About this RNA: The record gives the reactivity of an RNA of 177 nucleotides to DMS and 2A3. Values are in units of 0.01, from 0 to 300, in steps of 10. For DMS the reverse transcriptase was MarathonRT. It was measured as part of the RMDB libraries RFM100 and RFMREP. Values cover nucleotides 27 to 126. For 2A3 the reverse transcriptase was SuperScript II with manganese.

[RMDB]
RNA sequence: GGGAACGACUCGAGUAGAGUCGAAAAGGCCAGAAUAAUAUUGCGUAUGACUGGCGGUGCGUAAUCCGCCAAGCGCAGGUAGCCGCGAAAGCCGAGUGCCAGUACAUCAACCAGACUUUCGACUGGUACAAUCCACUAUGUUCGCAUAGUGGAUUGUAAAAGAAACAACAACAACAAC
Reactivity to DMS in 0.01 (KOAc 150mM, MgCl2 10mM, bicine 150mM(pH8.5), 24C), signal-to-noise 4, nucleotides 027 to 126: g030g000c020c030a080g000a120a060u020a080a100u000a080u030u010g010c030g010u000a110u040g000a090c170u000g010g000c000g010g000u010g000c220g010u020a130a100u030c010c030g040c000c010a040a090g010c010g000c020a010g010g000u000a100g000c060c060g020c070g010a030a080a100g010c010c060g020a100g000u020g000c010c010a040g000u020a060c110a060u030c120a110a080c040c030a030g010a100c110u010u020u010c080g010a100c020u000g000g010u010
Reactivity to 2A3 in 0.01 (KOAc 150mM, MgCl2 10mM, bicine 150mM(pH8.5), 24C), signal-to-noise 6, nucleotides 027 to 126: g040g030c010c010a040g130a070a090u220a120a020u070a100u120u090g000c010g000u060a050u210g100a120c080u040g000g000c020g010g010u050g010c200g090u150a040a060u020c010c000g010c000c000a020a000g010c020g000c000a010g000g070u040a010g050c000c010g020c020g060a090a020a000g040c020c010g020a020g010u060g020c020c010a030g040u090a050c010a070u120c020a030a030c000c010a000g080a080c020u080u140u080c120g050a070c020u040g010g000u010